[RMDB]
RNA sequence: GGGAACGACUCGAGUAGAGUCGAAAAAAGCUCACCUGGGUUGCUGGCAGUGCUUACCUCCUGGCAGUUGUAGGACUGAGUCCCCAUUUCCUUGCUGGCAUUGGCUGGAGGCCCCUUCUAGAGCCCAUCUUGAACUAGUUUUCGAACUAGUUCAAGAAAAAGAAACAACAACAACAAC
Reactivity to 2A3 in 0.01 (KOAc 150mM, MgCl2 10mM, bicine 150mM(pH8.5), 24C), signal-to-noise 1, nucleotides 027 to 126: a000a010g060c030u030c020a070c010c020u040g040g060g000u050u100g050c010u000g040g060c020a020g010u040g060c030u090u100a160c010c010u000c000c020u020g020g060c010a010g020u100u100g120u170a050g040g030a020c070u050g030a030g130u080c000c010c010c020a050u070u080u030c010c010u030u080g050c010u040g030g060c020a080u050u110g070g000c020u040g030g030a010g000g040c000c000c020c020u060u050c020u040a040g010a040g040c000c000c000a030
Reactivity to DMS in 0.01 (KOAc 150mM, MgCl2 10mM, bicine 150mM(pH8.5), 24C), signal-to-noise 5, nucleotides 027 to 126: a070a080g010c040u000c030a110c060c040u010g010g020g010u000u000g010c030u000g010g000c100a060g020u000g010c080u000u010a100c090c030u010c040c020u000g000g010c020a050g010u000u000g020u000a060g010g010a070c190u010g000a130g010u010c020c020c010c030a120u000u010u000c020c010u010u000g010c030u000g010g000c050a080u000u010g010g000c050u000g000g000a110g010g000c050c030c020c030u000u000c040u010a090g000a140g010c010c010c040a130